[RMDB]
RNA sequence: GGGAACGACUCGAGUAGAGUCGAAAAUGAUUGGCGAUCAAGCGUUAUACCGAAGCUCUGGACUUUGCCGCAAGGCAGAGUGGUAGAAGAGCGUUGCAUGCGCGUCGAAGGGCGAUGGCGACUGACCAGGACGAUAGUCCUUCGGGACUAUCGUCCUAAAAGAAACAACAACAACAAC
Reactivity to 2A3 in 0.01 (KOAc 150mM, MgCl2 10mM, bicine 150mM(pH8.5), 24C), signal-to-noise 2, nucleotides 027 to 126: u150g000a060u060u100g080g000c030g020a060u050c150a150a010g080c000g020u100u120a010u060a070c000c070g060a020a000g020c000u000c000u000g060g020a030c000u000u010u030g030c010c010g000c000a070a060g000g000c010a000g010a010g020u050g080g100u170a070g000a200a000g000a000g040c050g000u020u070g060c010a060u090g000c010g000c010g000u090c010g000a070a060g030g030g000c030g030a020u040g060g000c030g030a110c040u060g030a050c000c050
Reactivity to DMS in 0.01 (KOAc 150mM, MgCl2 10mM, bicine 150mM(pH8.5), 24C), signal-to-noise 2, nucleotides 027 to 126: u040g020a070u010u010g010g000c050g000a130u000c050a070a140g010c020g010u000u010a040u020a090c070c020g010a090a150g000c030u000c000u000g010g010a020c000u010u000u000g030c010c000g020c280a100a180g000g010c000a020g000a000g020u020g000g040u010a080g010a140a040g010a060g000c010g040u020u000g010c080a090u030g000c050g010c010g000u010c060g020a120a110g000g000g000c000g000a080u000g000g000c040g000a040c050u030g000a060c100c200